Structure probing data (DMS and 2A3) for a 207-nucleotide construct. For DMS, 5,050 sequencing reads were counted. The reactions ran in a buffer of 150 mM KOAc, 10 mM MgCl2 and 150 mM bicine (pH 8.5), at 24 C. Values are in units of 0.01, from 0 to 300, in steps of 10. For DMS the reverse transcriptase was MarathonRT.
RNA sequence: GGGAACGACUCGAGUAGAGUCGAAAAAAACUUUUGUGACUUGCUGAAACGGGACUAAUCUCCUCACCGAGGCUAAGCAAGUAAAAUACGCCUCUCAUAUCCUUACUUGAGGGUGGUAAGGAAAUAACCUGCAACGCUUCCUUCGGGAAGCGUUGAAGUAUAAUGCUAGGUUCGCCUAGCAUUAUACAAAAGAAACAACAACAACAAC
Reactivity to DMS in 0.01 (KOAc 150mM, MgCl2 10mM, bicine 150mM(pH8.5), 24C), signal-to-noise 2, nucleotides 027 to 156: a050a030a030c040u010u000u000u010g020u000g010a150c030u010u000g020c020u000g000a140a080a070c040g010g010g010a060c050u000a120a130u010c050u000c020c010u000c070a150c070c040g000a090g040g020c030u000a120a100g020c020a020a030g000u010a060a040a050a080u010a060c060g020c010c010u000c000u000c050a130u000a120u000c030c000u010u000a030c080u010u000g010a050g010g010g050u000g010g010u000a000a020g000g010a020a070a060u000a070a070c040c010u000g030c000a010a020c010g030c000u000u000c000c010u010u010c300g070g030g000a030a000g000c000g000u020u000g000a010a090
Reactivity to 2A3 in 0.01 (KOAc 150mM, MgCl2 10mM, bicine 150mM(pH8.5), 24C), signal-to-noise 4, nucleotides 027 to 156: a000a000a010c120u140u080u060u130g090u030g040a040c010u010u000g010c010u030g030a040a090a070c050g000g010g000a010c020u050a060a080u050c020u020c040c010u040c030a060c020c060g010a020g040g000c040u040a040a010g010c010a010a040g050u120a030a030a020a010u110a030c050g010c010c010u020c000u000c040a030u040a060u190c010c000u010u010a020c000u020u060g040a050g020g040g000u010g000g000u000a000a000g000g050a030a080a000u060a020a050c040c090u090g020c010a000a000c000g000c000u000u000c000c000u020u020c090g060g000g000a000a000g000c000g000u000u000g000a000a000